[RMDB]
RNA sequence: GGGAACGACUCGAGUAGAGUCGAAAAGGCUUCGCGCUGGCGCGCGUCCUGCAUCGCGUUGGUGAGGCCGCUCAUGAUCGAGCCGAACAGCGCGAGCGCGGCCACCGAUACGACGAGCGCCUUCGGAACUAUGGAGUACUUUCGAGUACUCCAUAGUAAAAGAAACAACAACAACAAC
Reactivity to 2A3 in 0.01 (KOAc 150mM, MgCl2 10mM, bicine 150mM(pH8.5), 24C), signal-to-noise 4, nucleotides 027 to 126: g050g000c040u060u070c110g030c060g040c210u090g040g000c130g030c000g000c000g130u060c010c060u100g040c020a070u010c000g000c020g020u000u060g180g200u090g060a040g020g000c000c020g020c010u090c080a160u190g090a170u180c020g020a040g030c020c010g020a040a010c010a010g000c000g000c000g000a010g000c050g000c010g020g000c020c010a050c020c020g050a090u110a230c080g020a010c010g000a040g040c030g020c010c030u040u070c040g020g030a020
Reactivity to DMS in 0.01 (KOAc 150mM, MgCl2 10mM, bicine 150mM(pH8.5), 24C), signal-to-noise 9, nucleotides 027 to 126: g020g010c060u000u000c080g030c090g020c110u010g000g010c050g010c060g020c050g020u000c030c080u000g020c040a160u000c000g020c020g010u000u000g010g020u000g010a300g000g010c010c020g000c090u010c190a150u010g010a070u010c030g000a130g010c000c010g000a180a110c040a020g000c010g010c010g010a020g000c100g020c020g000g000c080c040a100c070c040g010a130u010a070c120g010a080c020g000a060g000c050g000c010c010u000u000c040g010g010a170